Chemical mapping of a 177-nucleotide RNA with DMS and 2A3. The RNA was probed in 150 mM KOAc, 10 mM MgCl2 and 150 mM bicine (pH 8.5) at 24 C. High DMS reactivity at an A or C suggests that its Watson-Crick edge is free. 2A3 adducts were read by reverse transcription with SuperScript II with manganese. For 2A3, 749 sequencing reads were counted. For DMS, 1,869 sequencing reads were counted. Values cover nucleotides 27 to 126.
RNA sequence: GGGAACGACUCGAGUAGAGUCGAAAAUGGCAGUUGGAGAAUCUCUCAAAUGUAUAGCUGAUAUUAAAAAUGUGUUAUCACUUGUUAGGUUCUUAAGUGUUACAAAUUAAUUCAGUACGAUAAUAAACCUACGAGUAGGUUUCGACCUACUCGUAGGAAAAGAAACAACAACAACAAC
Reactivity to DMS in 0.01 (KOAc 150mM, MgCl2 10mM, bicine 150mM(pH8.5), 24C), signal-to-noise 2, nucleotides 027 to 126: u010g000g000c000a050g000u030u010g010g020a030g000a010a020u010c000u050c000u040c040a000a030a080u020g020u060a060u000a010g040c040u000g000a080u000a210u000u020a030a100a020a160a030u090g000u000g040u060u000a000u020c010a010c050u010u030g000u030u000a030g020g070u010u000c040u000u000a000a030g000u000g000u010u010a040c120a010a050a130u000u000a060a120u060u020c010a060g000u040a060c260g030a040u040a190a140u040a020a050a120
Reactivity to 2A3 in 0.01 (KOAc 150mM, MgCl2 10mM, bicine 150mM(pH8.5), 24C), signal-to-noise 2, nucleotides 027 to 126: u040g010g000c000a110g220u060u080g150g000a020g000a030a060u040c020u000c000u000c050a010a010a010u050g080u030a070u040a130g010c000u000g100a080u060a080u230u300a110a030a010a040a070u190g080u000g000u050u000a040u020c020a020c020u070u000g010u090u070a010g000g030u120u010c000u000u000a020a040g010u000g020u060u120a140c100a010a030a040u120u030a020a060u180u110c010a010g130u190a040c080g060a000u000a300a040u070a030a150a100